An RNA of 207 nucleotides, treated with 2A3 and read out base by base. It was measured as part of the RMDB library M2RFOK.
RNA sequence: GGGAACGACUCGAGUAGAGUCGAAAAACAUGCUGGCCAACCCAACCCCACGAUCCUCCAUCGGCAUGAUCAUGAUGUGUUCUCAAAUAUCAGGCCAGUAAAUCACCAUGCUCGUGCUGGUAAUGGCAACUUAUGCCCAAGUUCGCUUGGGCAUAAACCUGUCAUCCAAGUUCGCUUGGAUGACAGGAAAAGAAACAACAACAACAAC
Reactivity to 2A3 in 0.01 (KOAc 150mM, MgCl2 10mM, bicine 150mM(pH8.5), 24C), signal-to-noise 2, nucleotides 027 to 156: a000c090a050u080g000c020u020g000g000c000c020a030a050c060c050c020a000a140c020c010c020c000a050c080g050a160u070c030c060u020c010c000a060u030c050g020g000c010a010u040g000a000u000c000a000u010g060a200u120g030u010g050u100u000c060u020c010a120a090a010u300a100u090c080a070g000g010c000c010a000g020u000a010a100a010u060c000a000c040c000a000u000g010c000u020c000g000u020g000c000u000g030g000u020a040a110u060g040g020c040a030a050c060u000u000a000u000g010c000c000c000a010a010g000u010u020c110g030c080u030u010g000g000g000c020a010u010a000a000a000